[RMDB]
RNA sequence: GGGAACGACUCGAGUAGAGUCGAAAACAAAAACGGAUUGUGUCAGUAAUCACAACAAACAAAAACAAAGGGAUUGUGUCCCUAAUCACAAAAACAAAACAAAAUGGAUUGUGUCCGUAAUCACAAACCCAUAUUUAGCUUUCGAGCUAAAUAUGGGAAAAGAAACAACAACAACAAC
Reactivity to DMS in 0.01 (KOAc 150mM, MgCl2 10mM, bicine 150mM(pH8.5), 24C), signal-to-noise 2, nucleotides 027 to 126: c050a020a040a090a100a100c060g010g000a060u000u000g030u000g010u000c100a140g000u010a140a040u000c030a000c070a040a060c080a030a160a140c130a040a080a060a070a120c120a070a070a060g010g080g000a060u020u010g030u000g010u040c010c000c030u000a030a060u050c030a010c130a000a060a070a120a010c050a000a040a080a040c220a090a060a180a120u020g000g000a070u000u000g000u040g010u010c030c050g030u020a030a010u070c070a000c070a020a060a170
Reactivity to 2A3 in 0.01 (KOAc 150mM, MgCl2 10mM, bicine 150mM(pH8.5), 24C), signal-to-noise 6, nucleotides 027 to 126: c030a010a070a040a010a020c060g070g040a100u040u040g020u020g030u040c070a100g180u170a120a080u200c070a020c060a060a010c020a030a160a030c090a070a090a060a000a000c070a060a190a050g020g000g020a080u020u110g030u030g090u180c000c000c000u070a030a070u080c030a010c030a030a020a050a100a020c060a020a110a020a030c050a010a120a030a070u110g040g020a080u040u000g010u010g020u000c000c010g060u070a050a060u080c040a010c030a050a050a030
Conditions: 150 mM KOAc, 10 mM MgCl2 and 150 mM bicine (pH 8.5), 24 C. An RNA of 177 nucleotides, treated with DMS and 2A3 and read out base by base. The DMS profile rests on 2,663 reads. It was measured as part of the RMDB library OK1LIB. DMS (dimethyl sulfate) methylates the pairing face of unpaired adenines and cytosines.